[RMDB]
RNA sequence: GGGAACGACUCGAGUAGAGUCGAAAAGAACUCACCUGUCGUCGUCGACGAAUAGUGAUUCCGGUGAGAAAGGAGCUGCCAGCACUAAGCCGGACGGCGCCCUCGCACCAGUUCCGCUGUGGGUUCGCCUAUAACAUGCCUUCGGGCAUGUUAUAGGAAAAGAAACAACAACAACAAC
Reactivity to 2A3 in 0.01 (KOAc 150mM, MgCl2 10mM, bicine 150mM(pH8.5), 24C), signal-to-noise 2, nucleotides 027 to 126: g000a010a010c000u020c010a000c010c060u100g020u050c010g000u000c010g180u140c140g010a020c000g000a050a080u120a090g090u120g060a100u090u000c050c040g000g000u010g000a040g030a050a040a000g020g000a010g000c020u020g000c030c000a010g000c010a020c130u220a090a080g020c010c010g010g080a230c010g010g000c000g020c000c010c010u000c010g050c000a010c000c000a000g020u030u000c020c010g000c070u070g000u020g010g000g000u000u010c000g000
Reactivity to DMS in 0.01 (KOAc 150mM, MgCl2 10mM, bicine 150mM(pH8.5), 24C), signal-to-noise 4, nucleotides 027 to 126: g000a010a020c010u010c000a000c010c180u000g020u000c000g020u000c040g030u020c190g000a010c000g010a040a050u030a060g020u010g010a120u000u000c010c110g000g030u000g000a020g010a040a090a120g010g000a140g000c010u000g000c020c000a080g020c000a180c220u020a100a200g010c010c020g010g000a100c000g010g000c000g010c010c000c040u000c020g000c000a010c010c010a070g000u000u000c010c020g020c080u010g020u000g000g000g000u000u000c010g000

About this RNA:
An RNA of 177 nucleotides, treated with 2A3 and DMS and read out base by base. Conditions: 150 mM KOAc, 10 mM MgCl2 and 150 mM bicine (pH 8.5), 24 C. Source: RMDB library VIROID, as collected in RNAgym. Values are in units of 0.01, from 0 to 300, in steps of 10. The 2A3 profile rests on 3,253 reads.